About this RNA:
This 177-nucleotide RNA was probed chemically with DMS and 2A3. Reactivities are given for positions 27 through 126. For 2A3 the reverse transcriptase was SuperScript II with manganese. The DMS profile rests on 1,133 reads. The data come from the RNA Mapping Database (RMDB), library OK2TST. The 2A3 profile rests on 550 reads. The reactions ran in a buffer of 150 mM KOAc, 10 mM MgCl2 and 150 mM bicine (pH 8.5), at 24 C.

[RMDB]
RNA sequence: GGGAACGACUCGAGUAGAGUCGAAAAGAGUUUGAUUUUCCAGAACCCAAUGAGGGUUUCUUAUGGGAUGAUAUGGAUAGUGCCCUGGCAGCCGUCCCUGUAAAAGAAGAAUCUCUGGCUCCCAGCCCACACCAUUGCAGUUCGCUGCAAUGGUGUGAAAAGAAACAACAACAACAAC
Reactivity to DMS in 0.01 (KOAc 150mM, MgCl2 10mM, bicine 150mM(pH8.5), 24C), signal-to-noise 1, nucleotides 027 to 126: g020a040g020u010u010u010g000a160u010u000u000u010c030c060a120g000a030a070c010c000c000a130a130u020g020a170g000g010g020u000u000u000c030u000u010a070u000g010g000g010a000u000g000a120u000a080u010g000g000a140u010a090g020u010g010c020c040c050u000g020g020c060a130g020c060c040g010u000c000c000c020u000g000u000a030a040a110a080g000a090a120g000a020a030u000c010u000c050u000g000g010c080u000c010c000c000a240g010c100c050
Reactivity to 2A3 in 0.01 (KOAc 150mM, MgCl2 10mM, bicine 150mM(pH8.5), 24C), signal-to-noise 1, nucleotides 027 to 126: g000a030g000u070u060u120g080a110u050u040u000u000c020c000a000g040a010a000c000c020c120a040a090u300g030a230g130g000g010u050u090u060c030u090u170a040u060g000g000g000a030u040g030a030u050a060u300g060g020a020u080a230g130u030g060c040c030c070u090g080g030c010a020g060c030c040g030u000c060c000c000u030g010u140a110a120a020a000g090a050a030g020a050a030u080c020u030c040u070g000g000c000u000c010c000c000a030g030c030c000